[RMDB]
RNA sequence: GGGAACGACUCGAGUAGAGUCGAAAAGAUAUGGAUCCCAUACAGGCUUGGACCGUGUGGAUCGGAAACGAUCCCACGCUAGCCUUGAUGGGAUCCUAAGUCAAAGAUGAAAGUUCGCUUUCAUCAAGUCCCUUUUAUUGUUCGCAAUAAAAGGGACAAAAGAAACAACAACAACAAC
Reactivity to DMS in 0.01 (KOAc 150mM, MgCl2 10mM, bicine 150mM(pH8.5), 24C), signal-to-noise 4, nucleotides 027 to 126: g000a030u000a300u000g010g000a000u010c000c000c000a000u000a110c100a020g020g000c000u000u010g020g010a120c300c050g010u000g010u030g040g000a010u000c020g000g000a090a070a230c000g000a000u010c000c000c010a000c000g000c030u000a010g010c000c000u000u000g020a040u000g000g010g020a020u020c000c000u000a010a070g000u000c040a110a180a150g000a010u010g010a020a000a010g000u010u020c300g010c000u000u000u000c000a000u000c010a120a170
Reactivity to 2A3 in 0.01 (KOAc 150mM, MgCl2 10mM, bicine 150mM(pH8.5), 24C), signal-to-noise 3, nucleotides 027 to 126: g040a020u070a050u150g010g010a000u010c010c000c010a010u060a040c030a000g040g040c010u220u300g100g100a210c130c120g040u020g130u300g010g000a000u010c020g010g030a100a060a010c030g000a000u000c010c020c000a000c000g020c010u000a010g000c030c000u010u130g020a020u010g000g020g000a000u000c000c000u000a030a010g030u000c030a040a020a110g020a000u030g020a010a000a010g020u100u190c300g100c140u000u000u000c000a000u010c020a010a030

Notes:
Chemical mapping of a 177-nucleotide RNA with DMS and 2A3. Source: RMDB library TTRDES, as collected in RNAgym. Conditions: 150 mM KOAc, 10 mM MgCl2 and 150 mM bicine (pH 8.5), 24 C. 2A3 adducts were read by reverse transcription with SuperScript II with manganese. DMS (dimethyl sulfate) methylates the pairing face of unpaired adenines and cytosines. Reactivities are given for positions 27 through 126. DMS adducts were read by reverse transcription with MarathonRT.